[RMDB]
RNA sequence: GGGAACGACUCGAGUAGAGUCGAAAAGCACAGCUGGUUAUACUGCCGGUUUAGCAAUUGAAAGACUUGAAAAAGUUGGAAUGAAUAUUGAAGAUGGUCCUGUACUCGUUCGCGGUGCUUCAGGUGGAGGCCUACUGAAUUUCGAUUCAGUAGGCCUAAAAGAAACAACAACAACAAC
Reactivity to DMS in 0.01 (KOAc 150mM, MgCl2 10mM, bicine 150mM(pH8.5), 24C), signal-to-noise 2, nucleotides 027 to 126: g000c040a100c200a130g000c030u000g010g000u010u120a070u010a100c190u000g010c010c000g010g000u000u000u000a210g000c060a030a150u000u020g000a060a140a120g000a040c010u000u010g000a070a110a150a030a000g000u000u000g030g000a080a050u000g000a110a060u010a090u010u000g000a090a130g000a060u000g000g000u000c050c000u000g000u010a080c080u010c020g010u000u000c070g000c110g020g050u000g020c050u000u000c070a110g020g010u020g040g000